[RMDB]
RNA sequence: GGGAACGACUCGAGUAGAGUCGAAAACACAACGUGAAGGAUGUUCCAAUGGGCAAUCCGCAGCCAAGCCCCUACGUGUGGUGUCCGUAAUACAGACAUUCCAUAUGGGGAAGGUUCAGAGACUAAAUGGGUGUGGGUGCGUUACUCUCGAAGUGACCCAAGAAUGUAACUUCGGUUACAUUCUUGGAAAAGAAACAACAACAACAAC
Reactivity to 2A3 in 0.01 (KOAc 150mM, MgCl2 10mM, bicine 150mM(pH8.5), 24C), signal-to-noise 4, nucleotides 027 to 156: c070a000c020a010a120c070g080u080g040a080a030g040g040a070u040g050u100u110c040c040a100a130u170g020g040g000c030a060a060u020c020c030g000c030a010g020c000c000a050a050g010c000c000c010c000u080a060c150g020u010g040u070g010g000u010g000u000c010c000g040u070a030a000u070a070c030a000g010a000c000a000u210u090c060c000a010u020a030u200g000g000g000g010a020a050g020g000u080u070c020a030g060a030g010a120c070u120a070a080a070u120g030g030g000u030g010u030g010g030g000u040g020c020g010u010u040a020c020u030c030u050c060g040a070a000g040u040g060a030c000
Reactivity to DMS in 0.01 (KOAc 150mM, MgCl2 10mM, bicine 150mM(pH8.5), 24C), signal-to-noise 1, nucleotides 027 to 156: c070a140c040a120a090c030g010u020g000a110a080g020g010a140u000g000u000u000c020c040a120a120u000g090g000g040c070a060a070u010c020c000g020c100a070g010c000c010a100a130g020c040c000c010c020u000a000c050g040u000g000u000g030g020u000g000u010c020c020g010u010a090a210u000a300c200a030g000a000c000a040u000u010c100c020a030u000a020u000g030g020g020g050a130a070g000g000u010u000c040a110g000a180g010a110c050u030a020a070a100u010g020g000g020u010g000u000g000g010g000u000g010c060g000u020u000a080c020u000c000u020c120g000a080a050g000u000g020a160c050
Description: The record gives the reactivity of an RNA of 207 nucleotides to 2A3 and DMS. Conditions: 150 mM KOAc, 10 mM MgCl2 and 150 mM bicine (pH 8.5), 24 C. The DMS profile rests on 2,599 reads. The 2A3 profile rests on 3,096 reads. 2A3 adducts were read by reverse transcription with SuperScript II with manganese. Source: RMDB library ARCHII, as collected in RNAgym. For DMS the reverse transcriptase was MarathonRT.